RNA sequence: GGGAACGACUCGAGUAGAGUCGAAAACAGCGGCGACAACAUGAACCCUGUCUUCAUAUACUUGGUGCCGAAGCCCUGCCCCCGCGAGCGUAUCGUGCUCCCUGGUUUGUGCGCUCGGCCGGUACGCGGCCAUUACGUCAUUCGUGACGUAAUGGCCAAAAGAAACAACAACAACAAC
Reactivity to DMS in 0.01 (KOAc 150mM, MgCl2 10mM, bicine 150mM(pH8.5), 24C), signal-to-noise 3, nucleotides 027 to 126: c110a060g020c060g010g020c020g000a040c060a050a070c170a070u000g000a080a060c040c070c070u000g000u010c100u000u000c060a070u000a140u000a100c110u000u000g020g020u010g010c000c020g010a100a140g030c010c010c030u010g020c020c020c010c010c040g010c110g000a080g010c010g030u010a060u010c070g020u010g020c010u000c010c020c020u000g010g000u020u000u010g010u010g010c060g000c010u000c060g010g000c030c000g000g000u010a020c080g010c090
Reactivity to 2A3 in 0.01 (KOAc 150mM, MgCl2 10mM, bicine 150mM(pH8.5), 24C), signal-to-noise 1, nucleotides 027 to 126: c040a020g070c080g050g000c000g030a020c010a100a010c010a100u070g060a050a030c000c010c070u040g050u030c040u120u030c060a030u080a010u020a230c000u020u050g100g000u060g050c040c010g040a060a030g010c000c000c020u080g020c010c010c000c020c000g030c020g020a020g010c030g000u040a000u140c010g040u100g010c020u010c030c000c000u060g000g110u070u130u110g110u060g020c070g000c040u000c040g000g000c000c020g000g000u010a010c020g000c000